Annotation
An RNA of 207 nucleotides, treated with 2A3 and read out base by base. Conditions: 150 mM KOAc, 10 mM MgCl2 and 150 mM bicine (pH 8.5), 24 C. The data come from the RNA Mapping Database (RMDB), library M2RFPK.
RNA sequence: GGGAACGACUCGAGUAGAGUCGAAAAACACCAAAACUGAAAACGGAAGGCAAUCCUUCCAUGACGAUACUUACUUUCCUUUGAUCGUCGUUACUACUGGCAUAGCCACAAAGGAGAACAAACAUGAGCGCGGACACUGACUUCGGUCAGUGUCCAACCUACGCGCUUAGUUCGCUAAGCGCGUAGGAAAAGAAACAACAACAACAAC
Reactivity to 2A3 in 0.01 (KOAc 150mM, MgCl2 10mM, bicine 150mM(pH8.5), 24C), signal-to-noise 2, nucleotides 027 to 156: a000c090a130c060c030a020a110a050a040c160u180g080a100a110a010a040c070g000g010a010a000g030g010c140a040a160u260c010c000u030u040c020c020a030u010g000a000c000g010a000u070a100c050u090u020a030c010u120u130u000c000c000u010u030u060g010a070u050c010g010u000c010g010u120u030a070c020u030a040c010u020g000g000c010a210u100a140g030c010c000a060c020a010a020a000g070g030a020g050a070a070c030a030a090a040c070a080u190g050a100g110c120g000c110g030g000a000c000a000c000u000g000a010c000u040u040c130g040g000u000c000a000g020u000g010u010c010c000a000a000